[RMDB]
RNA sequence: GGGAACGACUCGAGUAGAGUCGAAAAGAUAUGGAUUAUCAGCGCUGGGUUGCCAGCAGUCGGAAACGACUGGGCACUCCCAGAACUACGCUGUGUCCUAAGUCAAAGUGGUCGUUCGCGACCACAAGUGGAAUCAACAGUUCGCUGUUGAUUCCACAAAAGAAACAACAACAACAAC
Reactivity to DMS in 0.01 (KOAc 150mM, MgCl2 10mM, bicine 150mM(pH8.5), 24C), signal-to-noise 2, nucleotides 027 to 126: g020a070u020a300u000g010g020a020u010u000a070u010c020a030g000c000g000c010u020g000g000g000u020u000g000c000c010a180g020c020a010g020u000c000g000g000a170a070a230c000g020a020c000u010g010g000g000c000a010c130u000c000c010c000a000g000a040a070c160u010a300c030g060c020u000g000u010g010u000c000c000u010a020a070g020u000c040a080a100a130g000u000g000g010u000c000g020u010u000c300g010c010g010a000c000c010a010c030a030a090
Reactivity to 2A3 in 0.01 (KOAc 150mM, MgCl2 10mM, bicine 150mM(pH8.5), 24C), signal-to-noise 2, nucleotides 027 to 126: g050a020u110a050u200g050g020a050u150u120a100u300c000a010g000c010g000c050u010g000g010g000u040u010g000c000c010a060g150c000a000g300u020c010g000g010a040a070a100c020g000a000c000u000g010g000g010c010a040c070u100c020c010c000a010g020a000a100c080u200a040c030g000c000u000g020u000g000u020c000c000u010a200a040g020u060c090a210a000a070g010u000g010g000u010c020g010u060u130c270g000c010g110a000c000c000a010c010a010a010
The data come from the RNA Mapping Database (RMDB), library TTRDEL.
Chemical mapping of a 177-nucleotide RNA with DMS and 2A3.
Conditions: 150 mM KOAc, 10 mM MgCl2 and 150 mM bicine (pH 8.5), 24 C.